[RMDB]
The record gives the reactivity of an RNA of 177 nucleotides to 2A3 and DMS.
RNA sequence: GGGAACGACUCGAGUAGAGUCGAAAAGAUAUGGAAAUAUCGGGAGAGUGGUAUUCGGAAACGAAUACAACUCAUCGAUCGAGUAUUUCCUAAGUCAAAGCACAACGCAGUUCGCUGCGUUGUGCAACCAUUAAUGUUUCUUCGGAAACAUUAAUGGAAAAGAAACAACAACAACAAC
Reactivity to 2A3 in 0.01 (KOAc 150mM, MgCl2 10mM, bicine 150mM(pH8.5), 24C), signal-to-noise 4, nucleotides 027 to 126: g010a000u010a000u040g000g000a000a010a010u010a000u010c000g000g020g000a060g000a000g010u050g030g000u020a000u010u000c000g000g000a000a000a000c000g000a010a000u000a010c000a010a020c000u000c000a030u300c040g010a010u000c010g000a040g270u040a020u000u000u000c000c000u000a010a000g000u000c040a180a130a020g000c010a010c000a000a000c010g000c000a000g020u070u130c240g120c180u000g000c000g000u010u000g000u000g010c000a000a000
Reactivity to DMS in 0.01 (KOAc 150mM, MgCl2 10mM, bicine 150mM(pH8.5), 24C), signal-to-noise 5, nucleotides 027 to 126: g000a020u000a020u010g000g000a010a010a010u000a010u000c000g010g000g000a010g010a010g040u000g000g020u000a000u010u000c000g020g000a010a010a030c000g010a010a000u000a000c000a020a010c000u000c000a300u000c210g010a010u010c000g010a040g000u000a000u000u000u000c000c000u000a010a100g000u000c010a090a100a120g000c000a010c000a010a010c000g000c000a010g010u000u010c260g030c010u000g000c000g010u000u000g010u000g010c010a010a030
The reactions ran in a buffer of 150 mM KOAc, 10 mM MgCl2 and 150 mM bicine (pH 8.5), at 24 C.